[RMDB]
An RNA of 177 nucleotides, treated with DMS and 2A3 and read out base by base. 2A3 adducts were read by reverse transcription with SuperScript II with manganese. For DMS the reverse transcriptase was MarathonRT. The reactions ran in a buffer of 150 mM KOAc, 10 mM MgCl2 and 150 mM bicine (pH 8.5), at 24 C. It was measured as part of the RMDB libraries RFM100 and RFMREP. Reactivities are given for positions 27 through 126.
RNA sequence: GGGAACGACUCGAGUAGAGUCGAAAAGGUGCAGAGAGAAAAAAGAGCAGUGACAUUAGGAGCUUUGUUCCUUGGGUUCUUGGGAGCAGCAGGAAGCACUAUGGGCGCAGCGUCAAUGACGCUGACGGUACAGAGGUAGCUUCGGCUACCUCUGUACAAAAGAAACAACAACAACAAC
Reactivity to DMS in 0.01 (KOAc 150mM, MgCl2 10mM, bicine 150mM(pH8.5), 24C), signal-to-noise 3, nucleotides 027 to 126: g030g000u000g020c030a030g000a090g040a110g050a010a040a060a070a060a060g000a060g030c030a050g020u020g000a100c080a070u010u030a040g010g000a090g020c070u020u000u040g030u000u000c010c020u000u020g020g020g000u010u000c030u030u010g010g010g010a100g020c070a040g010c060a040g000g020a080a040g010c060a030c060u000a060u020g000g000g000c030g000c020a010g000c000g010u000c010a110a170u040g010a010c000g020c010u010g000a020c060g000
Reactivity to 2A3 in 0.01 (KOAc 150mM, MgCl2 10mM, bicine 150mM(pH8.5), 24C), signal-to-noise 4, nucleotides 027 to 126: g040g010u050g000c030a000g020a000g010a020g050a100a100a040a050a040a010g070a010g000c030a040g020u010g080a050c010a080u110u130a060g020g010a040g020c020u050u050u120g050u040u030c000c000u020u040g050g020g010u070u020c040u050u070g020g000g010a050g030c020a000g000c000a010g010g030a020a050g000c000a000c090u060a080u130g070g020g010c070g000c000a000g000c010g000u020c050a160a300u300g000a000c000g020c000u000g030a050c020g050